This 177-nucleotide RNA was probed chemically with DMS and 2A3.
The reactions ran in a buffer of 150 mM KOAc, 10 mM MgCl2 and 150 mM bicine (pH 8.5), at 24 C.
The data come from the RNA Mapping Database (RMDB), libraries RFM100 and RFMREP.
For 2A3 the reverse transcriptase was SuperScript II with manganese.
[RMDB]
RNA sequence: GGGAACGACUCGAGUAGAGUCGAAAAGGUGCCGAAAGCACAGGAAGGAAGGGUCAAGAACAGGUCAGUGAUGCCCUCAGAUGGUCUGGGCUGCACGCGCACUACAGUGGUCAUAGAAAUGAAACGAAAAUUGUCCAUUGUUCGCAAUGGACAAUUUAAAAGAAACAACAACAACAAC
Reactivity to DMS in 0.01 (KOAc 150mM, MgCl2 10mM, bicine 150mM(pH8.5), 24C), signal-to-noise 7, nucleotides 027 to 126: g010g010u010g000c010c030g000a100a120a120g010c010a030c020a050g000g010a100a070g000g010a170a050g000g010g010u030c070a070a050g000a170a060c080a080g000g030u020c140a100g010u020g000a200u010g000c040c010c010u010c070a090g010a130u080g000g000u000c020u000g000g000g010c040u010g010c110a090c070g010c140g010c030a040c020u010a080c130a070g010u010g000g000u010c050a080u030a070g010a070a040a070u020g000a050a040a080c150g010a070
Reactivity to 2A3 in 0.01 (KOAc 150mM, MgCl2 10mM, bicine 150mM(pH8.5), 24C), signal-to-noise 5, nucleotides 027 to 126: g020g010u020g000c000c000g020a070a000a000g000c010a000c000a020g070g030a030a030g100g020a030a040g070g010g010u130c110a070a060g050a060a040c030a050g080g150u140c030a000g040u030g070a080u110g020c000c000c000u020c020a080g040a100u130g060g090u060c040u030g010g030g020c000u020g000c010a020c020g020c010g040c010a000c010u060a050c020a030g100u110g020g050u060c020a070u040a130g090a030a070a060u160g060a080a050a020c070g080a060